Structure probing data (DMS) for a 177-nucleotide construct. The reactions ran in a buffer of 150 mM KOAc, 10 mM MgCl2 and 150 mM bicine (pH 8.5), at 24 C. The DMS profile rests on 961 reads. It was measured as part of the RMDB library TTRINS. DMS adducts were read by reverse transcription with MarathonRT.
[RMDB]
RNA sequence: GGGAACGACUCGAGUAGAGUCGAAAAGAUAUGGAGAUUUCAGAGUGGAAGUUCCUACCACACAGGUGGUCGGAAACGACCAUAUUGGUGUGGGUCAGGAACAGGAAGCUCUGAAAUCUCCUAAGUCGUGUAUCAUCUUGUUCGCAAGAUGAUACACAAAAGAAACAACAACAACAAC
Reactivity to DMS in 0.01 (KOAc 150mM, MgCl2 10mM, bicine 150mM(pH8.5), 24C), signal-to-noise 1, nucleotides 027 to 126: g000a190u000a300u000g010g010a010g010a010u000u010u000c000a010g030a010g040u000g010g000a300a300g040u000u000c000c000u000a090c000c000a010c000a000c000a070g040g010u000g010g010u010c000g000g000a120a080a170c010g020a040c000c000a000u000a090u020u010g070g080u030g060u000g000g000g000u010c260a000g010g010a000a000c010a050g000g000a300a300g000c000u000c000u000g000a000a000a000u000c000u010c000c000u010a010a090g000u010c090